Source: RMDB library OK3TST, as collected in RNAgym. The record gives the reactivity of an RNA of 207 nucleotides to 2A3.
[RMDB]
RNA sequence: GGGAACGACUCGAGUAGAGUCGAAAAGCUGCAGGGCCUCCCCCGGGGUCCCGCUCUCGUUCAGUGGGUGGCAUUAGCCUGCCCCAGGUUCCUCAGCUUCGGAGAGGACAAGCAGCCGGGACCUGAGAGCUUUCUGUGUUGCAGUGACCAAGCAGAACCAGCAUAAAUGAUUCGUCAUUUAUGCUGGAAAAGAAACAACAACAACAAC
Reactivity to 2A3 in 0.01 (KOAc 150mM, MgCl2 10mM, bicine 150mM(pH8.5), 24C), signal-to-noise 1, nucleotides 027 to 156: g000c000u020g000c000a000g100g000g000c020c060u010c070c050c000c010c100g060g000g030g010u020c010c020c020g020c000u030c000u010c030g130u300u180c020a070g040u230g060g020g000u020g010g000c040a050u140u300a070g000c000c020u050g050c030c000c000c000a000g000g080u070u000c020c000u010c020a050g000c060u250u240c170g060g010a130g000a040g050g020a000c010a040a030g080c140a010g090c150c140g000g000g000a020c000c010u020g040a050g010a000g010c000u040u140u070c020u040g050u030g110u080u050g000c000a000g010u010g020a010c000c030a080a010g000c020a010g030a040a010

Conditions: 150 mM KOAc, 10 mM MgCl2 and 150 mM bicine (pH 8.5), 24 C.